[RMDB]
This 177-nucleotide RNA was probed chemically with 2A3 and DMS. For 2A3, 4,367 sequencing reads were counted. The data come from the RNA Mapping Database (RMDB), library TTRDES. The DMS profile rests on 4,349 reads. The RNA was probed in 150 mM KOAc, 10 mM MgCl2 and 150 mM bicine (pH 8.5) at 24 C.
RNA sequence: GGGAACGACUCGAGUAGAGUCGAAAAAAAAAGAUAUGGAGAGGUGGAGACGCAGCAUGGGACUAUUAGCUCGGAAACGAGCUAACGAAUCCCAUGACGUCUAUGAAGCCUCUCCUAAGUCAAAAAACAAACAUAUUACGUUCGCGUAAUAUGUUUGAAAAGAAACAACAACAACAAC
Reactivity to 2A3 in 0.01 (KOAc 150mM, MgCl2 10mM, bicine 150mM(pH8.5), 24C), signal-to-noise 2, nucleotides 027 to 126: a000a000a000a000a000g080a030u100a050u160g000g000a000g030a000g000g000u030g020g040a030g010a020c010g020c100a150g060c010a070u010g000g000g010a010c020u060a040u100u020a000g000c000u000c010g030g000a000a060a060c010g000a000g040c000u010a000a000c000g040a060a230u020c000c000c000a000u010g000a010c000g000u000c000u010a300u010g010a010a000g000c000c000u000c000u020c000c000u010a010a010g030u000c010a000a060a070a050a070a070
Reactivity to DMS in 0.01 (KOAc 150mM, MgCl2 10mM, bicine 150mM(pH8.5), 24C), signal-to-noise 4, nucleotides 027 to 126: a050a050a060a120a080g010a020u000a300u000g000g000a010g000a030g010g010u010g000g010a010g000a020c010g020c300a120g030c020a020u000g000g000g000a010c050u000a230u000u000a010g000c000u000c010g000g000a100a060a150c000g010a010g010c010u010a000a000c060g000a060a130u000c000c000c000a000u000g000a060c010g000u000c010u000a200u010g010a090a260g000c000c000u000c000u000c010c000u000a000a080g000u010c020a000a050a100a060a090a120